[RMDB]
RNA sequence: GGGAACGACUCGAGUAGAGUCGAAAAGCGGUGAACCGGCUCGCGGUGCGUUCGGGCGCGUCGAGGUAGCCGAGGAACCACAGCAGCGGGCUGUGGUCUGUGUCGAUCGCGACCCGGCCGACCUCGAGAUGCCCGAUGCAUUCGUGCAUCGGGCAUCAAAAGAAACAACAACAACAAC
Reactivity to DMS in 0.01 (KOAc 150mM, MgCl2 10mM, bicine 150mM(pH8.5), 24C), signal-to-noise 2, nucleotides 027 to 126: g030c070g020g010u010g010a100a120c050c010g000g000c070u000c080g010c120g020g020u010g000c040g000u000u020c060g020g000g000c020g030c180g000u050c000g000a010g000g000u000a220g020c040c030g010a080g020g000a050a030c000c000a000c010a050g030c040a300g060c240g020g020g010c000u020g010u000g000g010u000c020u000g000u000g000u000c040g000a130u010c240g010c030g000a070c030c030c020g010g000c030c040g040a070c030c010u000c000g000a110
Reactivity to 2A3 in 0.01 (KOAc 150mM, MgCl2 10mM, bicine 150mM(pH8.5), 24C), signal-to-noise 1, nucleotides 027 to 126: g080c040g020g060u090g070a100a110c030c000g090g000c050u020c040g050c050g000g030u040g040c030g030u020u090c010g020g050g010c070g000c060g080u000c020g000a020g060g060u070a010g000c000c020g000a020g050g000a020a030c000c000a000c000a000g020c000a020g290c130g120g090g000c000u010g000u010g040g000u000c040u070g120u000g000u000c020g040a190u200c150g030c010g200a150c010c000c000g030g000c020c030g080a050c000c010u030c000g030a030
Chemical mapping of a 177-nucleotide RNA with DMS and 2A3.
The 2A3 profile rests on 1,619 reads.
It was measured as part of the RMDB library OK2TST.
The reactions ran in a buffer of 150 mM KOAc, 10 mM MgCl2 and 150 mM bicine (pH 8.5), at 24 C.
Values cover nucleotides 27 to 126.